[RMDB]
RNA sequence: GGGAACGACUCGAGUAGAGUCGAAAACGAAGGACUUUCGAGUCCUUCGACUUUCCGAGAAAGAUCCUCGGUAUAAAUCUGGAACCCUUGGAAACAAGGGAAUGAACGGAAUCUUCGGAUUCCGUAAGACAACGAUUGCAUUCGUGCAAUCGUUGUCAAAAGAAACAACAACAACAAC
Reactivity to DMS in 0.01 (KOAc 150mM, MgCl2 10mM, bicine 150mM(pH8.5), 24C), signal-to-noise 1, nucleotides 027 to 126: c060g000a010a030g000g030a010c010u000u000u000c100g010a020g000u000c000c010u010u010c000g000a120c090u000u000u000c000c010g000a030g000a040a090a110g000a060u000c060c000u000c030g020g020u000a110u000a010a100a070u000c070u010g010g000a150a170c000c000c000u000u020g000g000a170a130a120c000a000a020g000g000g010a010a000u000g000a110a060c000g000g000a010a010u000c000u000u020c230g000g000a010u000u000c000c000g010u000a030a110
Reactivity to 2A3 in 0.01 (KOAc 150mM, MgCl2 10mM, bicine 150mM(pH8.5), 24C), signal-to-noise 1, nucleotides 027 to 126: c000g000a000a000g000g030a010c030u060u050u120c160g040a020g000u040c020c000u000u000c000g000a000c010u080u130u020c000c000g000a000g010a040a250a010g110a040u020c000c010u000c010g000g010u090a050u040a110a100a040u040c080u090g230g080a160a140c000c000c000u010u010g000g030a040a050a010c000a010a000g000g010g010a000a040u060g030a020a000c000g030g000a000a000u040c000u100u110c150g020g010a000u000u000c000c000g020u000a030a060